Description
Structure probing data (DMS and 2A3) for a 170-nucleotide construct. 2A3 is a SHAPE reagent: it acylates the 2'-hydroxyl of flexible nucleotides of all four kinds. It was measured as part of the RMDB library 15KLIB.

RNA sequence: GGGAACGACUCGAGUAGAGUCGAAAAAUGACUUUUUCUGGUAAUGUAGAUCUUGAUGCGUUAGCUAGUGAUAUUUUUGACACUCCUAGCGUACUUCAAGCUACUCUUUCUGAGUUUUCACACUUAGUACGUCCCACGUUCGCGUGGGACAAAAGAAACAACAACAACAAC
Reactivity to DMS in 0.01 (KOAc 150mM, MgCl2 10mM, bicine 150mM(pH8.5), 24C), signal-to-noise 5, nucleotides 027 to 129: a060u070g010a080c080u010u030u080u040u000c100u030g020g010u060a110a070u030g030u020a020g030a090u000c010u020u010g020a040u000g030c000g020u010u010a080g000c120u020a000g030u060g030a150u060a000u070u000u020u030u030g020a060c090a010c050u070c300c000u020a030g020c040g130u030a040c170u000u010c060a000a020g030c040u000a070c010u010c130u000u010u020c040u010g000a090g020u000u000u020u030c140a230c000a040c040u000u000a040g030u070a070c130
Reactivity to 2A3 in 0.01 (KOAc 150mM, MgCl2 10mM, bicine 150mM(pH8.5), 24C), signal-to-noise 3, nucleotides 027 to 129: a000u100g000a030c020u070u070u060u050u090c070u100g010g040u080a100a060u120g020u010a010g010a100u060c020u000u000g010a000u010g000c000g020u000u000a000g010c140u020a000g020u000g110a060u040a120u190u180u040u000u140g070a000c010a000c000u000c000c000u000a000g000c000g000u020a050c040u000u000c020a000a000g000c000u000a030c000u000c010u020u130u010c010u000g040a000g010u000u000u140u050c090a060c000a010c060u000u000a020g050u080a060c050
Source information:
Values cover nucleotides 27 to 129.